RNA sequence: GGGAACGACUCGAGUAGAGUCGAAAAUUACAUCCGUAGGUGAUCAGAGGGGAAAAGAAGAGCUAGAGCAACUCCCACACUCAUGAGCGUCCUCAUACUGUUCUGGGCGCUUCUCACAGGUGCUUCUAGAUUAGAUAUGGUUCGCCAUAUCUAAUCUAAAAGAAACAACAACAACAAC
Reactivity to 2A3 in 0.01 (KOAc 150mM, MgCl2 10mM, bicine 150mM(pH8.5), 24C), signal-to-noise 9, nucleotides 027 to 126: u130u070a050c020a050u040c020c010g040u060a030g000g070u040g030a080u080c050a030g020a080g040g020g010g030a020a080a040a040g090a040a020g020a010g030c040u090a020g010a010g050c020a010a060c020u030c010c020c000a030c000a010c010u090c030a080u140g020a000g010c000g020u020c010c010u060c020a070u160a220c100u180g090u240u100c040u030g010g000g000c000g000c000u030u020c020u010c010a100c020a030g060g020u030g030c010u020u010c000u010
Reactivity to DMS in 0.01 (KOAc 150mM, MgCl2 10mM, bicine 150mM(pH8.5), 24C), signal-to-noise 6, nucleotides 027 to 126: u020u020a110c140a070u020c040c030g010u000a050g010g010u010g000a060u010c060a050g000a070g010g000g000g010a070a050a110a080g000a050a050g000a060g020c040u010a070g010a080g020c100a070a070c090u010c020c010c020a140c130a060c060u020c050a080u000g010a020g010c040g000u010c020c010u010c120a060u030a120c190u010g010u020u010c060u010g000g010g010c020g000c030u010u000c020u000c090a080c160a090g000g010u000g010c030u000u000c040u010